This 177-nucleotide RNA was probed chemically with DMS.
RNA sequence: GGGAACGACUCGAGUAGAGUCGAAAACGAGAGACGGUUUCUGAGCAGGAAUUCUGAAAUCCCCACCACUUCCUCCCUCCGGGGGAUUUGAUCCCCUAUGGCCACCGCUAACAGCAUCAUCGUGCUGCAUUCCAUGUCCGUUCGCGGACAUGGAAUGAAAAGAAACAACAACAACAAC
Reactivity to DMS in 0.01 (KOAc 150mM, MgCl2 10mM, bicine 150mM(pH8.5), 24C), signal-to-noise 1, nucleotides 027 to 126: c040g020a140g020a080g020a100c180g000g040u000u010u000c000u020g000a170g010c100a050g010g000a020a130u010u020c050u010g000a040a060a080u010c040c000c000c070a120c060c030a050c040u000u000c010c010u000c010c010c030u010c080c080g000g000g020g000g010a000u030u010u010g040a070u010c000c020c000c020u010a050u010g010g010c050c030a050c110c050g000c070u010a070a200c040a020g030c010a020u150c160a110u020c090g000u000g000c040u000g000
It was measured as part of the RMDB library OK2TST. Reactivities are given for positions 27 through 126.